[RMDB]
RNA sequence: GGGAACGACUCGAGUAGAGUCGAAAAGGCCAUCGGUUCUGCCUGUCCAUUUACGAUGGCCGAGGGACAGGUUUAUAUAUCAAUCGCCGAGAGGCGUACAGUUAGAGUAGCGAGGUCGUAUGACCGGACCGCUUAGACCUCGCGAAGGUCCGGGAGAAUCACUAUAAUGAUUCGUCAUUAUAGUGAUAAAAGAAACAACAACAACAAC
Reactivity to 2A3 in 0.01 (KOAc 150mM, MgCl2 10mM, bicine 150mM(pH8.5), 24C), signal-to-noise 2, nucleotides 027 to 156: g020g000c000c000a000u010c030g110g040u180u080c080u070g010c000c010u020g000u030c010c010a050u100u070u140a070c030g000a020u010g020g020c030c000g000a100g000g010g000a010c010a020g070g000u000u170u030a130u020a010u000a000u050c020a080a030u060c020g010c010c000g030a020g020a050g040g000c000g000u010a020c020a020g010u140u170a050g000a040g150u120a030g020c020g000a010g000g000u020c040g040u160a070u150g050a040c050c010g010g000a030c000c000g010c080u000u010a040g000a020c000c000u000c010g030c010g000a020a000g010g020u050c040c030g010g020g000a090g070a040
Reactivity to DMS in 0.01 (KOAc 150mM, MgCl2 10mM, bicine 150mM(pH8.5), 24C), signal-to-noise 3, nucleotides 027 to 156: g000g060c010c020a010u000c010g010g030u020u000c150u010g030c010c000u000g000u000c020c030a190u020u030u000a070c030g010a030u000g020g040c000c010g010a070g030g010g010a040c020a030g010g010u000u000u010a100u000a150u010a130u040c050a090a120u010c020g030c040c010g010a250g010a190g010g010c020g010u010a040c100a080g010u010u000a130g010a130g010u010a150g000c030g000a190g010g000u000c000g010u000a130u010g010a080c000c010g000g010a090c030c020g010c090u000u000a080g000a030c000c010u000c010g010c040g000a050a070g000g010u000c020c020g010g010g010a190g010a180